[RMDB]
RNA sequence: GGGAACGACUCGAGUAGAGUCGAAAAGAUCAGGAUCACGGCGGCAAGGCCGGUGAGCAACACCAGUUCGCGGUCGGCGCCCAUCAGCAGGUUCGGGCGUGAUAGCGCCCGAUGUAUUCGAGUGCGGAGCGGCAGGCUAUUUCGAUAGCCUGCCGCUAAAAGAAACAACAACAACAAC
Reactivity to 2A3 in 0.01 (KOAc 150mM, MgCl2 10mM, bicine 150mM(pH8.5), 24C), signal-to-noise 1, nucleotides 027 to 126: g040a060u120c080a050g010g010a030u120c080a000c060g000g080c000g210g000c120a090a250g040g010c020c020g000g080u120g000a050g000c030a050a090c040a110c040c000a000g000u100u040c010g000c030g000g000u000c000g030g000c000g000c000c000c000a040u030c040a000g110c020a040g040g090u090u000c000g020g000g010c010g020u030g070a300u050a100g050c050g000c000c010c000g000a000u000g010u000a000u010u200c060g040a090g020u140g180c000g030g040
Reactivity to DMS in 0.01 (KOAc 150mM, MgCl2 10mM, bicine 150mM(pH8.5), 24C), signal-to-noise 1, nucleotides 027 to 126: g000a010u000c000a140g000g000a110u000c040a060c170g000g050c070g090g130c070a010a230g100g000c010c010g020g000u000g010a070g080c000a140a070c110a080c300c170a090g010u000u000c120g010c170g000g010u000c000g000g000c150g150c040c000c080a100u020c090a130g090c040a000g000g000u000u000c000g000g000g000c000g070u040g000a250u070a200g000c000g000c000c070c000g000a000u000g000u000a040u000u000c050g000a080g030u050g030c000g010g000